RNA sequence: GGGAACGACUCGAGUAGAGUCGAAAAGAUAUGGACGUGAUUAUCGCGAUAAGUCUCGGUCGGAAACGACCGUAGACUUUUGACGCGAGAAUCACGUCCUAAGUCAAAACUGGUGUUCGCACCAGAACAUGUACAGACUCUUCGGAGUCUGUACAUGAAAAGAAACAACAACAACAAC
Reactivity to 2A3 in 0.01 (KOAc 150mM, MgCl2 10mM, bicine 150mM(pH8.5), 24C), signal-to-noise 2, nucleotides 027 to 126: g030a040u090a060u180g000g000a000c010g030u030g010a000u000u090a030u040c010g000c010g110a090u050a090a020g020u000c010u000c010g000g000u000c010g040g020a090a080a130c030g010a000c010c010g050u020a000g000a010c020u030u020u050u050g050a030c000g010c000g020a010g000a000a020u010c000a000c000g000u000c000c000u000a000a000g010u000c020a010a000a100a100c000u000g000g060u000g070u120u100c300g030c130a000c010c000a000g010a040a020
Reactivity to DMS in 0.01 (KOAc 150mM, MgCl2 10mM, bicine 150mM(pH8.5), 24C), signal-to-noise 3, nucleotides 027 to 126: g010a070u020a300u010g000g000a010c000g010u000g010a010u000u010a070u000c000g040c000g020a160u000a020a020g020u000c000u000c010g010g000u000c000g010g000a090a150a240c000g010a020c000c020g040u010a000g010a010c000u000u000u000u010g020a140c120g020c000g000a010g000a020a010u010c000a010c010g010u000c000c000u010a000a090g010u010c060a110a050a140a140c030u000g000g020u010g010u010u010c230g040c020a020c000c010a030g010a100a180

Source information: The record gives the reactivity of an RNA of 177 nucleotides to 2A3 and DMS. The RNA was probed in 150 mM KOAc, 10 mM MgCl2 and 150 mM bicine (pH 8.5) at 24 C.